Structure probing data (2A3 and DMS) for a 177-nucleotide construct. The data come from the RNA Mapping Database (RMDB), library OK2TST.

RNA sequence: GGGAACGACUCGAGUAGAGUCGAAAACACAAAACCUUACAAUUAUUUUCGCUGCCGGCCAAGGCGAUGGCAAAGAGCGUGGUAUCAAUCACCUUGCACAAGAAGGCUUGGUAAAACGUAUGGUGGCCAUGACGUGUUCUUUCGAGAACACGUCAUGAAAAGAAACAACAACAACAAC
Reactivity to 2A3 in 0.01 (KOAc 150mM, MgCl2 10mM, bicine 150mM(pH8.5), 24C), signal-to-noise 3, nucleotides 027 to 126: c090a000c040a030a040a040a080c060c060u160u260a060c070a140a180u200u090a160u110u250u050u110c020g000c030u030g000c000c010g030g000c040c000a020a010g090g010c040g040a020u050g040g000c010a090a040a040g140a020g030c090g000u000g010g020u090a120u260c080a140a020u020c010a070c020c000u050u030g060c140a130c040a250a000g160a040a010g060g040c000u010u010g020g000u040a050a070a050a010c070g070u090a060u100g000g010u010g010g020c030
Reactivity to DMS in 0.01 (KOAc 150mM, MgCl2 10mM, bicine 150mM(pH8.5), 24C), signal-to-noise 2, nucleotides 027 to 126: c080a080c190a100a050a080a070c070c030u000u000a120c210a050a100u010u010a150u020u010u000u010c090g000c000u000g020c040c020g020g030c040c030a050a110g000g010c140g000a090u000g000g000c000a040a090a090g020a080g010c070g030u000g010g000u010a040u000c120a030a000u000c220a060c000c000u000u000g000c090a110c270a090a160g020a050a060g000g000c080u000u010g000g010u000a020a020a040a030c060g010u000a090u010g030g000u000g000g020c020